Chemical mapping of a 207-nucleotide RNA with 2A3 and DMS. Values cover nucleotides 27 to 156. For 2A3, 12,182 sequencing reads were counted. 2A3 adducts were read by reverse transcription with SuperScript II with manganese. Reactivities are rounded to 0.1 and cut off at 0 and 3.

[RMDB]
RNA sequence: GGGAACGACUCGAGUAGAGUCGAAAACAGGACCAAUUCGUUGGUCCUGGACUAGCGCCCGUAGCUCAAUGGAUAGAGCGUUUGACUACGGAUCAAAAGGUUAGGGGUUCGACUCCCCUCGGGCGCGCCAUUUACGAAUCAACUUCGGUUGAUUCAAGUAAAUAGGCGUAUUCGUACGCCUAUUUACAAAAGAAACAACAACAACAAC
Reactivity to 2A3 in 0.01 (KOAc 150mM, MgCl2 10mM, bicine 150mM(pH8.5), 24C), signal-to-noise 5, nucleotides 027 to 156: c000a010g000g000a000c000c010a010a020u090u090c240g050u100u010g000g000u000c000c000u000g000g000a020c070u050a030g000c000g000c000c000c010g000u000a000g000c000u000c000a020a060u170g130g080a240u110a080g000a010g010c010g000u000u000u000g010a010c020u110a090c180g160g070a240u010c010a010a000a010a000g000g000u010u010a000g000g000g010g000u000u010c000g000a000c000u000c000c000c000c000u000c000g000g000g000c000g000c000g000c000c000a020u050u060u100a100c100g000a000a000u000c000a010a010c000u060u090c250g080g000u000u000g000a000u000u000c000a000a000
Reactivity to DMS in 0.01 (KOAc 150mM, MgCl2 10mM, bicine 150mM(pH8.5), 24C), signal-to-noise 3, nucleotides 027 to 156: c000a020g000g020a000c010c010a010a050u000u010c300g000u000u000g010g000u000c000c010u000g000g000a090c100u000a170g020c020g000c050c000c000g030u000a080g010c010u000c010a100a060u010g020g000a270u000a050g000a050g050c000g000u000u000u000g000a020c010u000a150c150g020g010a170u000c030a060a020a070a070g020g010u000u000a030g020g010g020g000u010u000c010g010a300c060u000c020c000c060c000u000c010g030g010g030c020g000c020g010c010c010a050u000u010u000a120c160g010a010a010u000c000a010a000c010u000u000c280g000g010u010u000g000a020u000u010c000a000a160